[RMDB]
RNA sequence: GGGAACGACUCGAGUAGAGUCGAAAAGCUCCUUUGCGCUUUUUUUUCGGAUUAGGCGUGGAGGCGAAAGUCACCCUCCUCGCAUCGCAAGUUCGUGCUUGCGACUUACACGUAGGGCGACGGGUGGAAAACAGUAUGGGAUUCGUCCCAUACUGAACUAUCAACUUCGUUUCGACGAAGUUGAUAGAAAAGAAACAACAACAACAAC
Reactivity to DMS in 0.01 (KOAc 150mM, MgCl2 10mM, bicine 150mM(pH8.5), 24C), signal-to-noise 1, nucleotides 027 to 156: g000c100u020c000c000u000u000u000g050c030g020c000u000u000u000u030u000u020u000u000c230g050g010a090u000u000a020g010g030c000g040u010g000g010a020g000g000c030g040a100a090a060g030u000c010a050c000c000c000u010c000c010u000c040g010c300a070u000c000g010c010a030a010g010u010u010c290g020u000g020c000u000u000g010c000g030a010c050u010u000a120c080a080c020g020u000a080g000g040g010c030g030a030c030g010g020g020u030g010g000a090a070a100a160c000a050g000u000a000u000g020g010g000a050u000u010c300g010u000c030c000c000a000u000a020c000u000g020a040a080
Reactivity to 2A3 in 0.01 (KOAc 150mM, MgCl2 10mM, bicine 150mM(pH8.5), 24C), signal-to-noise 4, nucleotides 027 to 156: g010c060u040c000c010u030u020u030g000c000g000c000u000u040u010u010u030u000u030u110c200g130g040a020u020u060a020g020g000c000g020u030g000g030a010g000g030c110g040a090a050a010g120u100c010a010c000c000c010u030c000c010u010c010g030c030a020u010c000g000c000a010a000g000u200u300c190g180u300g100c000u000u000g000c000g000a010c000u020u130a050c090a030c090g090u170a150g000g000g020c100g050a040c120g000g010g010u020g000g030a070a100a010a030c030a000g000u000a000u010g000g010g000a000u040u100c110g070u010c060c000c000a000u000a000c000u000g000a000a000